[RMDB]
RNA sequence: GGGAACGACUCGAGUAGAGUCGAAAAAGUUCGCGCUUCCGUGAAACGCGAAAAUCGGACGGUGGCUGCAAGUCGCAUCGCAAAACCGCGGCAAGUGGAGUUAGCGAGAGGGGGCUGGGUUUUGGCUAGAACACACGGUACUUCGGUACCGUGUGAAUAGUAAUACUACUUUCGAGUAGUAUUACUAAAAAGAAACAACAACAACAAC
Reactivity to DMS in 0.01 (KOAc 150mM, MgCl2 10mM, bicine 150mM(pH8.5), 24C), signal-to-noise 4, nucleotides 027 to 156: a120g020u000u000c000g020c010g020c020u000u000c030c210g020u010g010a050a020a020c020g000c010g000a010a020a070a090u000c060g000g000a120c050g010g010u000g010g000c030u010g010c050a080a130g030u000c040g020c060a130u000c030g010c030a070a070a090a170c060c070g000c030g020g000c060a070a140g020u010g010g010a160g010u000u000a120g010c050g010a110g010a110g010g010g010g010g030c040u000g000g010g020u000u010u000u000g000g010c040u000a110g000a070a200c000a010c000a010c000g000g010u000a020c000u000u000c300g050g020u000a000c000c000g000u000g000u000g000a010a040
Reactivity to 2A3 in 0.01 (KOAc 150mM, MgCl2 10mM, bicine 150mM(pH8.5), 24C), signal-to-noise 5, nucleotides 027 to 156: a000g090u040u020c020g000c010g020c060u130u010c040c080g120u110g110a090a040a030c030g010c020g040a050a010a000a080u120c030g030g030a040c030g020g030u080g010g040c060u080g020c080a040a050g030u040c020g010c050a050u030c030g010c060a030a030a030a070c030c040g000c010g040g030c100a110a050g020u020g060g040a070g010u080u110a010g030c030g020a030g010a060g060g020g000g010g020c030u030g000g010g030u010u050u100u090g030g010c020u050a030g080a170a000c000a000c000a000c020g000g000u010a010c000u010u040c130g060g000u010a000c010c000g000u000g000u010g000a000a000